[RMDB]
Notes:
Chemical mapping of a 177-nucleotide RNA with DMS and 2A3. The reactions ran in a buffer of 150 mM KOAc, 10 mM MgCl2 and 150 mM bicine (pH 8.5), at 24 C. DMS adducts were read by reverse transcription with MarathonRT.
RNA sequence: GGGAACGACUCGAGUAGAGUCGAAAAAGAGCCGACGAACCUUCCAACCUUCCAACCUUCCAACCUUCCAACCUUCCAACCUUCCAAUCUACUCGAGAGGAGGAGGAGGAGGUGGAGGAGGACAUAAUUCUAUAGCUAGAUUCGUCUAGCUAUAGAAAAAAGAAACAACAACAACAAC
Reactivity to DMS in 0.01 (KOAc 150mM, MgCl2 10mM, bicine 150mM(pH8.5), 24C), signal-to-noise 4, nucleotides 027 to 126: a100g010a130g020c010c040g040a080c070g010a090a090c040c010u000u000c020c040a090a110c080c020u010u000c010c020a070a110c050c030u000u000c020c050a090a110c050c030u010u010c020c010a090a090c060c000u000u010c010c030a100a130c070c030u000u000c020c010a120a230u010c010u000a030c070u010c050g000a030g010a270g000g000a150g000g000a110g000g000a210g030g000a050g000g020u010g000g020a090g000g000a140g010g010a300c210a030u000a050a050
Reactivity to 2A3 in 0.01 (KOAc 150mM, MgCl2 10mM, bicine 150mM(pH8.5), 24C), signal-to-noise 3, nucleotides 027 to 126: a000g090a020g060c020c020g010a030c010g000a040a050c020c000u050u010c020c020a040a060c010c010u050u000c020c030a080a080c010c010u040u000c030c010a080a070c000c030u060u040c000c020a060a070c040c010u050u000c020c010a060a060c010c010u090u000c010c000a040a050u000c010u050a060c050u060c060g020a020g000a010g050g040a030g000g030a030g020g020a070g030g030a050g030g020u030g030g020a050g010g050a010g000g000a010c030a090u280a120a130

Notes
2A3 adducts were read by reverse transcription with SuperScript II with manganese.